[RMDB]
RNA sequence: GGGAACGACUCGAGUAGAGUCGAAAAGACUUAAUCAAAAUAAAUGUUUUGCGAAGCAAAAUCACUUUUACUUACUAUCUAGUUUUGAAUGUAUAAUCUACAUUCAUAUGUCUGGUGACUAUAGCAAACACGCUUCCCAGUUCGCUGGGAAGCGUGUAAAAGAAACAACAACAACAAC
Reactivity to 2A3 in 0.01 (KOAc 150mM, MgCl2 10mM, bicine 150mM(pH8.5), 24C), signal-to-noise 1, nucleotides 027 to 126: g000a020c020u020u210a000a090u120c160a020a190a110a060u140a100a100a020u290g120u040u100u100u060g070c170g070a090a020g120c100a050a040a100a130u280c030a050c030u050u000u050u160a000c000u000u030a100c000u030a090u240c140u210a030g000u000u120u000u060g000a000a000u000g050u020a020u050a160a060u000c050u000a000c000a000u000u000c000a090u090a120u190g050u030c030u100g000g000u030g090a140c070u100a050u000a050g120c020a010a010

Annotation: An RNA of 177 nucleotides, treated with 2A3 and read out base by base. 2A3 adducts were read by reverse transcription with SuperScript II with manganese. The RNA was probed in 150 mM KOAc, 10 mM MgCl2 and 150 mM bicine (pH 8.5) at 24 C.